[RMDB]
RNA sequence: GGGAACGACUCGAGUAGAGUCGAAAAUACUAGCAUUCGGUUCCAACCCUGGAUGGAUACUCAAAGGUUGGCUGAGUUCCUUCCUCCGGCCUUGGUUCCGAUGCUCCAUCCAUGGCCGGAAACCAAAAUAUGACGUUAAAUUCGUUUAACGUCAUAUAAAAGAAACAACAACAACAAC
Reactivity to DMS in 0.01 (KOAc 150mM, MgCl2 10mM, bicine 150mM(pH8.5), 24C), signal-to-noise 7, nucleotides 027 to 126: u010a110c080u010a060g010c040a050u000u000c030g020g010u000u000c030c020a030a100c060c060c050u010g000g000a020u000g000g010a040u000a030c050u000c030a040a080a100g010g020u000u000g010g010c140u000g000a050g010u000u000c020c010u000u000c040c020u000c030c040g000g010c050c040u000u000g010g000u000u000c050c030g010a040u000g000c050u010c070c060a080u010c040c050a040u000g000g010c030c020g010g000a070a080a080c110c100a050a070a100
Reactivity to 2A3 in 0.01 (KOAc 150mM, MgCl2 10mM, bicine 150mM(pH8.5), 24C), signal-to-noise 5, nucleotides 027 to 126: u140a030c060u040a020g030c020a050u070u130c040g020g000u030u020c010c010a030a030c050c000c040u030g020g000a010u020g000g030a050u080a200c010u010c040a060a080a070g200g000u090u050g080g010c040u020g010a010g010u020u020c010c000u010u020c010c020u000c010c010g000g000c010c010u010u020g020g000u040u030c010c010g010a020u030g000c010u000c010c000a050u010c020c010a090u080g030g000c020c010g020g040a030a030a030c060c020a050a150a020